[RMDB]
RNA sequence: GGGAACGACUCGAGUAGAGUCGAAAAAUAUGAAAGAGGGAGUAAAACAGUAUGGACCCAACUCCCCUUAUAUGAGGACAUUAUUAGAUUCCAUUGCUCAUGGACAUAGACUCAUUCCUUAUGAUUGUAAGCCACUUUUAUUCGUAAAAGUGGCUUAAAAAGAAACAACAACAACAAC
Reactivity to 2A3 in 0.01 (KOAc 150mM, MgCl2 10mM, bicine 150mM(pH8.5), 24C), signal-to-noise 2, nucleotides 027 to 126: a010u130a090u120g070a010a000a000g160a160g020g000g000a000g000u030a000a000a120a000c000a000g000u240a140u300g200g000a000c000c000c130a000a000c000u000c000c000c000c000u010u020a020u000a040u270g060a040g000g090a020c090a020u000u240a010u030u130a120g020a200u140u000c020c000a000u000u000g070c000u030c130a000u010g040g000a000c000a020u000a000g050a040c010u000c060a020u100u000c000c020u190u090a170u060g180a100u000u190g000
Reactivity to DMS in 0.01 (KOAc 150mM, MgCl2 10mM, bicine 150mM(pH8.5), 24C), signal-to-noise 4, nucleotides 027 to 126: a100u020a020u030g020a060a040a050g010a160g000g010g000a030g010u000a040a070a050a160c110a110g010u040a140u030g000g000a180c020c020c040a130a090c010u000c000c000c000c010u010u000a060u060a030u010g010a030g010g020a110c180a060u060u070a050u010u010a030g010a140u030u000c010c010a010u010u020g010c180u050c070a100u020g020g020a040c120a070u010a040g010a130c040u010c010a040u000u010c000c030u010u030a050u050g000a090u010u010g010